[RMDB]
RNA sequence: GGGAACGACUCGAGUAGAGUCGAAAAUGCUGUCGGUCACGAGAAGCGAUGUCUAUAGUCGACCAGCAAACUUCAGCAGACACAGCGUGGCCAAGGUACAGCCAGUGUCGCUCUGCAGCGUCAGGAAUCCCAUCUUGACGUUCGCGUCGAGAUGGGAAAAAGAAACAACAACAACAAC
Reactivity to 2A3 in 0.01 (KOAc 150mM, MgCl2 10mM, bicine 150mM(pH8.5), 24C), signal-to-noise 9, nucleotides 027 to 126: u110g000c000u010g010u060c030g010g000u020c000a010c040g090a080g050a250a050g100c100g120a180u060g030u020c030u050a110u070a120g040u040c050g030a150c030c060a030g060c080a070a060a060c020u080u070c030a060g020c030a010g050a000c010a000c010a030g070c030g030u010g010g000c010c040a070a060g110g000u150a070c010a010g020c030c000a060g030u050g010u080c000g010c020u020c010u080g040c050a020g020c000g040u020c010a010g030g090a020a050
Reactivity to DMS in 0.01 (KOAc 150mM, MgCl2 10mM, bicine 150mM(pH8.5), 24C), signal-to-noise 7, nucleotides 027 to 126: u010g020c000u000g010u000c070g010g010u010c010a020c030g000a070g010a120a070g030c130g010a100u010g010u020c000u000a110u020a080g010u000c030g010a090c050c070a070g020c190a090a110a050c050u000u010c070a120g000c100a060g000a020c020a060c070a110g010c010g010u000g000g020c010c010a100a070g020g020u040a030c030a050g010c000c100a070g000u030g010u000c030g010c020u020c040u010g000c090a110g010c150g010u000c020a060g000g000a110a150
This 177-nucleotide RNA was probed chemically with 2A3 and DMS. Values cover nucleotides 27 to 126. The data come from the RNA Mapping Database (RMDB), library OK1LIB. 2A3 adducts were read by reverse transcription with SuperScript II with manganese. For 2A3, 12,206 sequencing reads were counted. The DMS profile rests on 17,471 reads. Conditions: 150 mM KOAc, 10 mM MgCl2 and 150 mM bicine (pH 8.5), 24 C. DMS (dimethyl sulfate) methylates the pairing face of unpaired adenines and cytosines.